An RNA of 177 nucleotides, treated with DMS and 2A3 and read out base by base.
High DMS reactivity at an A or C suggests that its Watson-Crick edge is free.
The DMS profile rests on 10,729 reads.
2A3 is a SHAPE reagent: it acylates the 2'-hydroxyl of flexible nucleotides of all four kinds.
For 2A3 the reverse transcriptase was SuperScript II with manganese.
For 2A3, 3,884 sequencing reads were counted.
It was measured as part of the RMDB library OK1LIB.

RNA sequence: GGGAACGACUCGAGUAGAGUCGAAAAGAGUGUGAAAUUUGACGUGCGUUACAAUUUUCCAGACACGCCGGAGAUUCAAGUGCCCCACGCGUGGGUCCACGCCGGAGAAGGGACCAACGUCAACAUCAAUUGUUGGAGAGUUCGCUCUCCAACAAUUAAAAGAAACAACAACAACAAC
Reactivity to DMS in 0.01 (KOAc 150mM, MgCl2 10mM, bicine 150mM(pH8.5), 24C), signal-to-noise 4, nucleotides 027 to 126: g020a060g010u000g010u020g010a060a090a070u000u010u020g010a060c040g030u010g020c130g000u010u000a130c180a070a080u010u010u020u010c020c050a140g010a140c080a040c070g010c020c020g010g000a080g000a120u010u000c110a070a070g010u010g000c110c000c020c060a120c170g010c080g020u010g000g000g010u010c050c020a040c090g000c020c030g010g000a050g000a090a100g000g010g010a040c060c040a090a040c010g010u010c050a060a060c290a060u030c140
Reactivity to 2A3 in 0.01 (KOAc 150mM, MgCl2 10mM, bicine 150mM(pH8.5), 24C), signal-to-noise 6, nucleotides 027 to 126: g090a030g040u110g000u040g050a100a080a140u070u040u050g030a030c020g030u090g040c030g060u080u040a090c090a110a090u060u050u110u060c040c040a030g020a070c020a010c060g030c020c000g050g020a070g010a050u170u160c100a110a020g050u020g080c000c010c000c010a050c040g100c030g030u140g020g010g000u010c040c010a050c050g020c010c060g030g020a060g050a050a080g040g020g020a000c000c030a030a010c000g020u030c010a020a010c010a120u150c040